[RMDB]
RNA sequence: GGGAACGACUCGAGUAGAGUCGAAAAAUCUUGGCGAAGUCAGCGCGGAAGGACCGCGCAACUCCUUACCCUCGCCUUUUUUUUUCCGCUCCCGUUCGCGAAAGCGUUCAGCGGAAAAGGGACCAAACUAUAGGCACAGGUUCGCCUGUGCCUAUAGAAAAGAAACAACAACAACAAC
Reactivity to DMS in 0.01 (KOAc 150mM, MgCl2 10mM, bicine 150mM(pH8.5), 24C), signal-to-noise 1, nucleotides 027 to 126: a010u030c120u010u000g010g020c030g020a050a060g000u010c120a120g000c020g040c000g010g010a300a210g000g000a110c000c010g000c010g040c010a060a030c040u000c040c040u000u010a200c080c020c010u010c030g000c020c030u000u000u000u000u000u000u000u000u000c010c000g000c000u000c170c080c110g000u000u000c000g020c000g010a080a030a180g000c010g000u000u000c020a080g000c000g030g000a000a000a000a000g020g020g030a100c120c130a100a020a100

The data come from the RNA Mapping Database (RMDB), library M2PK90. Structure probing data (DMS) for a 177-nucleotide construct. The DMS profile rests on 765 reads. Values cover nucleotides 27 to 126. The reactions ran in a buffer of 150 mM KOAc, 10 mM MgCl2 and 150 mM bicine (pH 8.5), at 24 C.